An RNA of 177 nucleotides, treated with DMS and 2A3 and read out base by base. For 2A3, 3,620 sequencing reads were counted. For DMS the reverse transcriptase was MarathonRT. Reactivities are given for positions 27 through 126.

[RMDB]
RNA sequence: GGGAACGACUCGAGUAGAGUCGAAAAGAAAGCGUCAUACGGCGAAUGAGAAGGAAAUGACGCAAAGAAAAACGUGCGCGAAAAGAAACGCGCACGACAAGAAAUCUCAUUCGCAGAAAUAAGAAAAGGCCUAAUAUAAUUUCGAUUAUAUUAGGCCAAAAGAAACAACAACAACAAC
Reactivity to DMS in 0.01 (KOAc 150mM, MgCl2 10mM, bicine 150mM(pH8.5), 24C), signal-to-noise 2, nucleotides 027 to 126: g000a090a090a170g000c000g020u000c000a010u000a030c280g030g000c010g000a000a000u000g010a010g000a120a090g070g020a070a090a010u040g000a000c010g000c020a050a120a120g000a060a080a100a120a270c000g000u000g000c000g140c000g000a070a030a100a170g000a150a140a080c030g030c000g030c000a000c070g020a050c200a140a140g010a140a120a100u030c000u000c000a010u010u000c000g040c000a180g000a050a000a020u080a100a160g000a050a120a160a090
Reactivity to 2A3 in 0.01 (KOAc 150mM, MgCl2 10mM, bicine 150mM(pH8.5), 24C), signal-to-noise 3, nucleotides 027 to 126: g090a010a070a000g000c000g000u000c020a020u100a080c140g200g000c000g000a000a000u010g010a000g010a060a160g180g100a120a130a020u030g000a000c000g000c020a060a100a000g020a040a060a030a000a000c010g000u010g000c020g000c030g110a010a130a040a190g140a070a170a000c000g000c000g020c000a010c010g020a000c010a000a040g080a030a130a090u020c000u000c000a000u000u030c000g000c010a000g010a000a040a100u300a030a040g080a070a080a020a010